[RMDB]
An RNA of 177 nucleotides, treated with 2A3 and DMS and read out base by base.
The data come from the RNA Mapping Database (RMDB), library M2PK50.
For 2A3, 3,805 sequencing reads were counted.
DMS adducts were read by reverse transcription with MarathonRT.

RNA sequence: GGGAACGACUCGAGUAGAGUCGAAAACCACCGCAAUUCGUUGCGGUGGGAAGGUGCAAUUCGCUGUCUGCACCACUGACGGCCAAUCCGUCAAAGCGAAAACUGGAGGGUCAUUCGUGACCCUCAAGGCUUUCUCAUAUUUCGAUAUGAGAAAGCCAAAAGAAACAACAACAACAAC
Reactivity to 2A3 in 0.01 (KOAc 150mM, MgCl2 10mM, bicine 150mM(pH8.5), 24C), signal-to-noise 2, nucleotides 027 to 126: c010c010a000c000c000g000c000a010a060u060u050c170g080u110u020g010c010g000g000u000g000g010g000a020a070g000g000u010g000c030a120a260u110u020c030g020c030u050g110u130c050u050g010c010a000c000c000a010c020u000g010a000c010g020g010c130c080a030a110u110c010c010g000u010c000a010a020a010g000c000g020a020a000a040a100c110u150g140g010a000g000g020g000u000c000a010u050u110c140g070u020g000a020c000c000c000u000c000a000a000
Reactivity to DMS in 0.01 (KOAc 150mM, MgCl2 10mM, bicine 150mM(pH8.5), 24C), signal-to-noise 2, nucleotides 027 to 126: c000c010a000c010c000g010c000a000a000u000u000c190g030u010u000g020c000g020g020u000g010g010g020a010a050g040g000u000g010c000a030a250u000u000c040g050c000u000g010u000c100u010g000c000a030c030c000a050c120u000g000a020c010g000g000c230c250a100a210u030c000c000g000u000c010a000a210a030g000c010g010a020a030a120a100c190u000g030g000a030g010g010g020u000c000a060u010u060c160g030u000g020a010c000c000c000u000c000a020a030